[RMDB]
RNA sequence: GGGAACGACUCGAGUAGAGUCGAAAACAGCUUGUGGCCGGUCCCACCUUCUUUGUAGGCCCGGGGGUCUACCAGGUGCGAGUAGAUCUUGGUGUCCUCGACCUUCGGCCACAUCUGCUCCAUCGGCACACCGAGCGUCCGCUCGAUCACCUGGAGGAUUCACCACUUGAUUCGUCAAGUGGUGAAUAAAAGAAACAACAACAACAAC
Reactivity to 2A3 in 0.01 (KOAc 150mM, MgCl2 10mM, bicine 150mM(pH8.5), 24C), signal-to-noise 2, nucleotides 027 to 156: c020a010g030c100u000u040g000u020g030g000c030c020g040g040u080c020c020c010a080c030c010u130u090c010u170u170u150g070u120a000g020g000c020c020c030g140g020g000g000g000u020c030u070a070c020c020a000g010g010u030g000c020g010a020g020u080a030g020a030u010c010u020u020g010g000u010g000u010c010c020u150c100g050a100c000c000u180u130c000g010g000c020c000a020c000a000u000c040u040g000c030u040c040c010a070u120c070g030g000c060a000c020a000c010c000g030a030g050c080g070u000c050c070g010c000u000c000g050a120u180c000a000c000c000u010g000g000a000g050g010